Structure probing data (DMS and 2A3) for a 177-nucleotide construct.
The RNA was probed in 150 mM KOAc, 10 mM MgCl2 and 150 mM bicine (pH 8.5) at 24 C.
It was measured as part of the RMDB library OK2TRN.
The 2A3 profile rests on 935 reads.
For DMS, 2,126 sequencing reads were counted.
[RMDB]
RNA sequence: GGGAACGACUCGAGUAGAGUCGAAAAUUAUAUUGUGCACUGGUACCCGCCAGGGGCCACCCUGGAUGCUGGAGAAGUAGCCGUGGGUAAUACAUCAGGUAGCAAUGGCUUUGAUGAUAAUGGGAUGGAACAGGGAAAAGUUCGCUUUUCCCUGUUCAAAAGAAACAACAACAACAAC
Reactivity to DMS in 0.01 (KOAc 150mM, MgCl2 10mM, bicine 150mM(pH8.5), 24C), signal-to-noise 2, nucleotides 027 to 126: u030u020a100u030a120u010u010g040u020g040c030a140c040u000g010g000u000a080c020c010c010g010c010c000a020g000g000g040g060c050c150a040c020c010c000u000g010g010a060u000g000c020u000g000g020a150g010a130a050g010u000a040g000c010c020g020u000g020g010g000u000a050a110u010a140c040a020u000c020a030g010g000u000a070g020c100a070a080u020g000g010c020u000u000u010g010a030u000g020a140u000a040a070u000g010g000g010a160u010g010
Reactivity to 2A3 in 0.01 (KOAc 150mM, MgCl2 10mM, bicine 150mM(pH8.5), 24C), signal-to-noise 1, nucleotides 027 to 126: u190u030a090u050a110u300u100g090u080g060c030a040c040u000g010g020u080a040c020c000c000g030c010c010a030g090g000g070g070c000c010a020c020c000c000u000g060g000a050u010g000c010u080g010g140a300g040a190a030g040u050a000g020c040c060g010u060g010g000g030u000a110a000u100a090c010a010u020c040a060g000g170u030a030g000c050a090a250u080g240g000c020u110u080u070g010a030u060g010a000u070a080a040u110g010g000g030a020u120g030